[RMDB]
Chemical mapping of a 207-nucleotide RNA with 2A3. The RNA was probed in 150 mM KOAc, 10 mM MgCl2 and 150 mM bicine (pH 8.5) at 24 C. Reactivities are given for positions 27 through 156. Source: RMDB library RNAMAK, as collected in RNAgym.
RNA sequence: GGGAACGACUCGAGUAGAGUCGAAAAACCACGGUUCGCCGUGGUAAAAAAGGGGUCGAGCUAAGACAGUGGAGCUGCACACUGAAGCCUCCACGGUGUAUAGCGUUGAAAUCGAGCUCGACGGAGGCACCCAAAAAUACGUGAUUCGUCACGUAAACAAGAGGGUGAUGUUCGCAUCACCCUCUUGAAAAGAAACAACAACAACAAC
Reactivity to 2A3 in 0.01 (KOAc 150mM, MgCl2 10mM, bicine 150mM(pH8.5), 24C), signal-to-noise 1, nucleotides 027 to 156: a010c000c000a010c000g000g040u060u080c290g040c180c020g010u030g000g010u080a090a050a000a030a000a030g170g000g030g000u000c000g000a000g000c000u050a300a080g120a060c150a130g190u290g180g140a030g020c000u030g000c010a020c010a000c030u040g000a050a030g010c000c000u000c000c000a020c000g000g000u000g000u000a030u050a000g000c050g040u030u300g140a150a150a010u010c050g010a010g000c000u000c000g000a000c010g000g000a000g000g020c000a000c000c000c000a020a020a020a020a020u070a000c030g000u000g000a000u050u070c050g050u000c090a000c010g020u000a020a040a000